[RMDB]
RNA sequence: GGGAACGACUCGAGUAGAGUCGAAAAGUCGUUGAUUAAGGAACACUUCAGGGAUAAAUCGGGCGACCUGAUAUACGGAUUCGACAGUGAUCCGACGGUGGAUCCCGCGAACGCCGAAAAACGGAUUGUCGCACACAACGUCGAAAUCAUCGAUGCGUCAAUCGUUACUUUUCGAAGUAACGAUUGAAAAAGAAACAACAACAACAAC
Reactivity to DMS in 0.01 (KOAc 150mM, MgCl2 10mM, bicine 150mM(pH8.5), 24C), signal-to-noise 2, nucleotides 027 to 156: g000u020c010g040u020u010g020a110u010u000a110a160g030g020a080a090c060a080c060u010u010c050a090g020g030g000a090u010a030a090a130u000c040g000g020g040c020g000a100c020c000u000g000a120u000a130u010a190c080g010g000a210u000u000c030g000a080c040a090g010u010g020a070u010c020c000g000a040c090g040g000u000g070g000a080u000c050c030c070g000c110g000a040a070c030g060c020c020g010a070a020a100a140a190c030g010g010a200u010u000g050u000c020g000c020a080c100a090c030a040a040c010g020u000c010g000a030a080a150u000c120a100u010c000g000a060u010g000c020g000
Reactivity to 2A3 in 0.01 (KOAc 150mM, MgCl2 10mM, bicine 150mM(pH8.5), 24C), signal-to-noise 5, nucleotides 027 to 156: g040u020c020g010u020u020g030a090u050u130a090a090g060g040a130a030c040a030c080u090u070c050a030g020g020g040a060u120a180a150a070u150c060g040g030g010c030g030a040c000c000u000g020a020u020a010u030a160c020g020g020a050u040u090c040g020a030c060a050g040u030g070a020u000c010c010g030a060c060g080g040u100g030g010a090u040c000c030c010g000c010g030a080a040c080g000c010c000g080a160a040a010a010a010c010g010g010a010u010u260g020u020c020g020c010a010c000a000c010a110a110c050g050u020c020g050a080a050a060u040c020a010u090c010g030a030u080g070c040g060